[RMDB]
RNA sequence: GGGAACGACUCGAGUAGAGUCGAAAAUCUUACAGUAGGCCUCAUGGUCGCUUUCUUCGGUGGGGUCGGUUACUUCAUCUGGAAGGAUUCCCAUAGCCGCAAAGGCUGAUCCUCCCGGAUACACAGAUAACGGAAGUACCUUCGGGUACUUCCGUUAAAAAGAAACAACAACAACAAC
Reactivity to 2A3 in 0.01 (KOAc 150mM, MgCl2 10mM, bicine 150mM(pH8.5), 24C), signal-to-noise 2, nucleotides 027 to 126: u010c010u090u130a120c000a050g070u220a060g130g000c020c000u150c000a010u060g050g020u080c020g090c150u080u060u080c040u020u000c010g070g000u000g000g010g000g000u000c030g010g060u190u070a050c010u070u250c000a010u010c000u050g000g010a000a000g000g040a050u040u030c070c000c000a040u090a010g000c000c000g070c150a170a180a050g000g000c050u000g000a090u000c000c000u000c000c000c000g010g000a030u090a060c160a000c010a000g100a180
Reactivity to DMS in 0.01 (KOAc 150mM, MgCl2 10mM, bicine 150mM(pH8.5), 24C), signal-to-noise 2, nucleotides 027 to 126: u030c140u090u010a000c140a080g010u020a140g020g000c030c000u000c020a130u030g000g000u000c050g000c170u000u040u000c000u000u000c060g010g070u010g000g010g010g020u000c000g060g020u050u080a090c070u050u010c070a030u000c000u000g060g010a000a000g000g000a210u010u000c080c070c020a300u050a000g000c040c000g000c300a130a110a150g010g040c000u000g000a080u000c000c080u030c060c040c000g000g010a010u020a030c260a090c170a120g000a160